[RMDB]
RNA sequence: GGGAACGACUCGAGUAGAGUCGAAAAGGAUAAUUUUUUGAAAGAUCAUCCAUGUUCUUUCCGGUCACUGGAAGAAAUUCUUCUACAUAUUCAGUUGCCUGGCAGGUGUAGCCAGCCAAAGCAGCUGCUCUGAAGCCCGAUUCGUCGGGCUUCAGAGAAAAGAAACAACAACAACAAC
Reactivity to 2A3 in 0.01 (KOAc 150mM, MgCl2 10mM, bicine 150mM(pH8.5), 24C), signal-to-noise 1, nucleotides 027 to 126: g030g010a000u050a040a040u260u210u130u140u170u240g070a090a000a020g070a040u030c000a000u000c020c000a000u180g090u050u060c000u000u000u090c010c100g020g020u220c210a110c130u130g020g070a020a020g010a060a100a000u220u000c010u000u000c020u040a060c030a160u180a070u100u090c000a000g000u010u000g000c000c000u000g050g020c030a040g030g000u150g140u180a030g280c010c000a000g020c000c000a020a020a020g000c000a000g010c000u030g000

Chemical mapping of a 177-nucleotide RNA with 2A3. Source: RMDB library OK1LIB, as collected in RNAgym. The 2A3 profile rests on 308 reads. High 2A3 reactivity points to a flexible backbone, as in loops and unpaired stretches.